About this RNA:
Chemical mapping of a 177-nucleotide RNA with 2A3 and DMS. The 2A3 profile rests on 1,793 reads. In probing experiments dimethyl sulfate is read out at A N1 and C N3, which are open when not base-paired. The RNA was probed in 150 mM KOAc, 10 mM MgCl2 and 150 mM bicine (pH 8.5) at 24 C.
[RMDB]
RNA sequence: GGGAACGACUCGAGUAGAGUCGAAAACAUUAUUUUGGGAUGCUAAAGUCAUUUAAUGCUGACCUCCACUGGGUGGAUUAAGGUCAAGGUAUGAAGUCCUAUUCGCUCCUGAUAGGAACGACUUCAUCAAAAUAUUGUACUUCGGUACAAUAUUUUGAAAAGAAACAACAACAACAAC
Reactivity to 2A3 in 0.01 (KOAc 150mM, MgCl2 10mM, bicine 150mM(pH8.5), 24C), signal-to-noise 3, nucleotides 027 to 126: c010a040u120u200a150u100u230u130u110g100g030g010a030u120g020c070u140a200a020a070g060u090c030a040u000u050u220a130a060u070g030c040u020g010a030c010c020u010c010c020a020c080u270g180g180g000u030g010g020a040u190u100a070a000g020g000u030c020a030a020g070g020u050a030u070g010a040a020g030u040c000c010u000a050u010u060c040g020c030u030c000c000u020g030a030u040a040g000g010a040a040c030g020a020c030u040u040c020a030u000
Reactivity to DMS in 0.01 (KOAc 150mM, MgCl2 10mM, bicine 150mM(pH8.5), 24C), signal-to-noise 2, nucleotides 027 to 126: c050a050u010u010a060u020u000u020u000g030g010g010a040u020g020c120u010a060a090a150g010u010c050a020u010u010u000a060a060u000g020c100u000g010a040c020c000u000c020c010a010c030u000g030g030g040u010g000g010a130u000u000a100a040g000g010u010c000a080a040g020g030u000a040u000g000a010a060g000u000c000c030u000a100u000u000c090g060c020u000c000c020u000g010a080u010a060g010g010a080a060c120g010a080c120u000u000c050a030u000